Structure probing data (DMS) for a 177-nucleotide construct. DMS adducts were read by reverse transcription with MarathonRT. It was measured as part of the RMDB library TTRDES.
RNA sequence: GGGAACGACUCGAGUAGAGUCGAAAAAAAGAUAUGGAUCCCAGAACUACUCCUAUAGUCCCGAAGAACUUUAUCGGAAACGAUAAAGGGAGGGACUCCCCCAUAGGAGCUGGGAUCCUAAGUCAAAGACAUCUAUUCAGUUCGCUGAAUAGAUGUCAAAAGAAACAACAACAACAAC
Reactivity to DMS in 0.01 (KOAc 150mM, MgCl2 10mM, bicine 150mM(pH8.5), 24C), signal-to-noise 1, nucleotides 027 to 126: a080a110a120g000a100u010a300u000g000g000a000u000c000c000c020a030g000a100a010c030u020a300c060u000c010c010u000a030u020a070g050u000c000c000c000g020a180a130g000a100a200c000u000u000u000a000u000c000g010g000a110a090a220c000g000a020u000a000a000a080g050g030g010a040g010g000g000a000c000u000c040c000c010c020c080a090u020a000g000g000a000g050c000u000g000g000g000a020u000c000c000u000a000a080g010u010c030a050a170a060
The reactions ran in a buffer of 150 mM KOAc, 10 mM MgCl2 and 150 mM bicine (pH 8.5), at 24 C.